[RMDB]
RNA sequence: GGGAACGACUCGAGUAGAGUCGAAAAGACGCUCGUAAAUCUCCAUUCAAAAAACUAACUGCAAACGACGAACGUUUCGCACUCGCCGCUUAAUCCGGUGAGCCUUGCAACAGCACGCUAGUGGGCUGGGCAAGGGGGUAGCAAUACCUCCCGGCUGCAAUUUAAACAAGUUCGCUUGUUUAAAUUGAAAAGAAACAACAACAACAAC
Reactivity to 2A3 in 0.01 (KOAc 150mM, MgCl2 10mM, bicine 150mM(pH8.5), 24C), signal-to-noise 4, nucleotides 027 to 156: g030a000c030g030c010u030c030g110u080a090a130a200u040c060u030c050c060a130u200u200c100a070a120a080a080a080a100c060u090a060a030c040u070g010c040a060a040a040c030g150a010c040g050a140a040c010g050u010u040u080c060g010c000a020c000u010c010g000c020c000g010c070u120u190a060a050u120c050c000g000g010u020g010a010g000c000c010u040u040g020c040a130a120c000a140g020c010a010c040g050c040u060a070g080u150g070g070g000c010u010g020g010g000c000a020a030g010g000g010g010g000u010a020g000c000a050a080u020a080c000c010u020c000c010c000g050g000c010u040g000
Reactivity to DMS in 0.01 (KOAc 150mM, MgCl2 10mM, bicine 150mM(pH8.5), 24C), signal-to-noise 2, nucleotides 027 to 156: g000a080c030g040c020u000c020g000u000a040a150a130u000c020u020c030c020a120u020u030c030a000a100a060a070a050a090c050u000a040a110c050u000g040c030a050a050a110c040g020a090c050g010a040a020c000g020u000u000u000c060g000c040a070c000u000c020g050c000c020g030c040u000u010a110a140u000c120c000g050g050u000g000a010g030c010c030u000u000g000c020a060a080c050a140g020c010a040c010g020c060u010a150g000u000g020g000g040c020u020g000g000g030c000a080a050g020g010g020g030g030u010a020g000c240a090a180u000a040c000c000u000c000c000c010g020g010c080u010g000
The data come from the RNA Mapping Database (RMDB), library RSTRND.
Structure probing data (2A3 and DMS) for a 207-nucleotide construct.
The reactions ran in a buffer of 150 mM KOAc, 10 mM MgCl2 and 150 mM bicine (pH 8.5), at 24 C.
For 2A3, 2,264 sequencing reads were counted.
For DMS the reverse transcriptase was MarathonRT.